[RMDB]
Structure probing data (DMS and 2A3) for a 177-nucleotide construct. High 2A3 reactivity points to a flexible backbone, as in loops and unpaired stretches. 2A3 adducts were read by reverse transcription with SuperScript II with manganese. The RNA was probed in 150 mM KOAc, 10 mM MgCl2 and 150 mM bicine (pH 8.5) at 24 C.

RNA sequence: GGGAACGACUCGAGUAGAGUCGAAAAGUGGGUAAUGAGCAAUACUCCCACAUUGUCUGCAGCCAUCUGCCUUAAAUGGUUCAAGGUUUCCUCUACAGACUCCUCAUCAAGCCCAGGAGUAGGCUCAGGUAAUUACGUAGUUCGCUACGUAAUUACCAAAAGAAACAACAACAACAAC
Reactivity to DMS in 0.01 (KOAc 150mM, MgCl2 10mM, bicine 150mM(pH8.5), 24C), signal-to-noise 4, nucleotides 027 to 126: g010u020g000g000g000u030a070a100u000g010a080g020c060a170a070u020a240c100u020c000c010c060a020c040a110u030u010g000u010c030u000g000c140a100g000c000c020a050u000c100u030g030c060c040u000u020a040a060a070u020g020g000u000u000c040a070a100g020g010u000u000u010c010c000u000c120u040a090c140a090g010a080c020u000c010c020u000c060a110u010c110a090a140g000c020c010c050a060g000g010a040g030u010a040g000g000c010u010c060a130
Reactivity to 2A3 in 0.01 (KOAc 150mM, MgCl2 10mM, bicine 150mM(pH8.5), 24C), signal-to-noise 9, nucleotides 027 to 126: g020u020g000g020g020u090a090a100u160g060a030g040c040a030a050u020a110c030u030c010c020c000a010c000a010u030u130g030u010c020u030g040c040a010g020c020c000a050u030c050u120g060c020c030u150u160a090a150a090u120g030g010u050u070c050a040a050g030g010u010u020u010c010c010u050c040u050a060c030a040g040a070c010u010c000c010u050c030a160u060c060a120a040g040c020c020c020a020g030g020a040g020u040a070g060g000c010u010c030a010